[RMDB]
RNA sequence: GGGAACGACUCGAGUAGAGUCGAAAACGUCGAGAGGCCGUUCCGGGUUGCUUCCCUGUGCUGGCACCCGACGCGGCUGGUGCUGGCUGUGGGCUGGGAGACUGGAGAAGUGACGGUGUUUAACAAGCAGGACAAGGAGCAGCACACGAUGCCCCUGUCGAUAUCGAGUAUUCGUACUCGAUAUCGAAAAAGAAACAACAACAACAAC
Reactivity to DMS in 0.01 (KOAc 150mM, MgCl2 10mM, bicine 150mM(pH8.5), 24C), signal-to-noise 1, nucleotides 027 to 156: c030g020u000c060g000a160g010a170g020g040c020c030g070u000u000c020c010g000g010g000u010u000g020c040u000u000c020c010c040u010g040u020g040c030u000g030g040c010a060c030c020c040g000a070c060g020c050g010g020c020u000g000g010u000g040c000u000g030g010c030u000g000u000g020g020g040c030u000g040g000g020a060g070a110c040u000g020g020a130g020a080a110g010u010g000a060c040g030g010u000g020u000u000u010a080a100c070a120a160g010c050a140g000g020a140c040a040a060g030g000a050g020c020a050g040c070a120c090a130c050g010a110u000g030c020c000c020c050u010g010
Reactivity to 2A3 in 0.01 (KOAc 150mM, MgCl2 10mM, bicine 150mM(pH8.5), 24C), signal-to-noise 1, nucleotides 027 to 156: c020g030u040c020g010a040g010a050g190g000c020c000g020u040u030c070c000g010g000g010u100u120g020c030u070u060c000c010c060u100g050u090g050c090u020g020g000c020a020c020c010c020g010a020c080g020c030g050g000c040u020g000g000u020g010c000u040g010g050c010u050g050u110g060g000g000c040u030g030g050g000a040g000a020c070u060g020g060a100g010a100a070g050u050g060a010c020g000g050u050g030u040u090u040a100a070c090a040a000g040c020a030g050g040a030c030a060a080g010g000a040g030c010a000g010c020a020c000a020c050g050a040u060g040c020c010c010c010u070g040